[RMDB]
RNA sequence: GGGAACGACUCGAGUAGAGUCGAAAAGAUAUAAGUUGCUGAGCAUGUUAUGUUGGAAAGAUAACAUGCUGGAGUAAUAAUGAAUUGCGGAACGCCUUAGGCUGGAAACAGAGCAGGGUUAGCAAUCGCUUGUAUACGGUGCAAAGUUUGCGAUGAGCCAGAAUACUCGGUUCGCCGAGUAUUCUGGAAAAGAAACAACAACAACAAC
Reactivity to 2A3 in 0.01 (KOAc 150mM, MgCl2 10mM, bicine 150mM(pH8.5), 24C), signal-to-noise 2, nucleotides 027 to 156: g050a010u070a010u020a170a090g020u030u040g020c010u020g050a000g000c000a010u020g000u000u010a000u010g220u190u120g100g090a060a100a040g070a010u020a020a010c000a000u000g000c000u000g000g020a010g000u030a060a060u040a000a060u050g060a030a040u030u060g000c040g040g030a070a020c040g090c010c000u090u060a090g060g000c000u060g020g060a040a150a010c020a050g050a010g040c050a000g000g000g010u040u070a010g000c010a000a020u030c030g010c020u020u000g040u010a040u010a100c110g060g000u070g000c040a040a090a090g050u060u080u060g080c050g010a060u050g020a060g050
An RNA of 207 nucleotides, treated with 2A3 and read out base by base. The reactions ran in a buffer of 150 mM KOAc, 10 mM MgCl2 and 150 mM bicine (pH 8.5), at 24 C.